[RMDB]
RNA sequence: GGGAACGACUCGAGUAGAGUCGAAAAGAGCGCGGGCUGACGCGGCUGAGGGCCGUCGACACGCGCACCUCCUCGCGGCUGCGAACCAUCUUGUUGGCCUCGAGCGGCGGAAUCAUUAUGGCCGGGUCGAUCUCCCGCACGGUGUGCUGAAACUGCGGAUAAUUAAGAUGUUCGCAUCUUAAUUAUCAAAAGAAACAACAACAACAAC
Reactivity to DMS in 0.01 (KOAc 150mM, MgCl2 10mM, bicine 150mM(pH8.5), 24C), signal-to-noise 2, nucleotides 027 to 156: g010a100g010c010g030c050g040g000g040c130u000g000a070c030g000c030g060g040c010u000g000a170g000g020g010c040c010g040u010c040g040a140c080a060c040g040c010g000c040a040c010c020u010c020c020u000c010g020c090g010g000c000u000g030c060g020a090a130c060c180a120u010c140u000u000g000u000u010g050g000c020c020u000c020g000a100g030c040g010g000c030g000g000a110a090u010c070a120u000u000a090u000g020g020c010c010g000g020g040u000c010g000a130u010c050u000c010c000c000g000c030a050c050g000g000u000g030u010g000c030u010g010a110a070a120c030u000g010c130g000
Reactivity to 2A3 in 0.01 (KOAc 150mM, MgCl2 10mM, bicine 150mM(pH8.5), 24C), signal-to-noise 4, nucleotides 027 to 156: g070a030g020c080g000c010g030g000g020c160u050g020a030c070g020c010g120g020c010u040g040a090g010g050g020c020c010g020u060c060g070a060c030a010c100g080c010g020c020a170c000c000u000c000c000u000c000g010c010g010g000c010u020g010c020g020a060a060c070c020a150u100c090u120u210g070u080u200g050g000c000c000u010c010g010a020g000c010g010g000c030g000g100a060a090u140c080a100u100u240a110u260g070g000c010c000g010g000g010u000c000g010a060u010c020u020c020c000c000g000c010a020c020g000g030u090g000u040g060c020u030g010a090a080a060c070u120g020c070g080
Annotation: This 207-nucleotide RNA was probed chemically with DMS and 2A3. The reactions ran in a buffer of 150 mM KOAc, 10 mM MgCl2 and 150 mM bicine (pH 8.5), at 24 C. Source: RMDB library OK3TST, as collected in RNAgym.